The record gives the reactivity of an RNA of 177 nucleotides to DMS and 2A3. For DMS the reverse transcriptase was MarathonRT. The RNA was probed in 150 mM KOAc, 10 mM MgCl2 and 150 mM bicine (pH 8.5) at 24 C.
[RMDB]
RNA sequence: GGGAACGACUCGAGUAGAGUCGAAAAAAAUCGCCACCCUUUUAUGCCAUACUGGUGGCCCAUGCCGGGCACAAUUAUGGCUAUGAAACGCUGAUGACCAUGCUGCCCACCUAUAUGUACAGAGUUCACUACUCCGUGAGUUCGCUCACGGAGUAGUAAAAGAAACAACAACAACAAC
Reactivity to DMS in 0.01 (KOAc 150mM, MgCl2 10mM, bicine 150mM(pH8.5), 24C), signal-to-noise 2, nucleotides 027 to 126: a050a060a040u020c020g000c020c040a220c000c020c030u000u080u020u030a080u010g000c000c010a000u000a000c160u000g030g030u000g000g000c000c010c000a050u040g000c210c190g000g000g060c010a030c000a040a010u010u030a000u000g000g000c020u000a090u030g010a030a000a130c100g010c050u000g000a090u060g010a050c000c020a060u000g030c000u030g030c000c030c020a040c090c110u020a060u000a070u050g000u000a090c140a030g000a080g000u000u000c050
Reactivity to 2A3 in 0.01 (KOAc 150mM, MgCl2 10mM, bicine 150mM(pH8.5), 24C), signal-to-noise 2, nucleotides 027 to 126: a010a000a060u130c040g080c000c040a000c000c020c030u020u170u000u000a060u120g000c000c000a020u000a000c010u030g300g070u130g250g030c000c000c000a060u210g180c050c120g030g010g000c010a000c010a000a000u040u010a050u060g000g000c000u020a040u020g080a090a100a000c010g010c070u090g060a060u060g000a020c040c000a000u000g000c010u040g000c010c010c000a020c000c000u150a090u030a020u300g080u040a040c100a070g150a010g060u040u110c000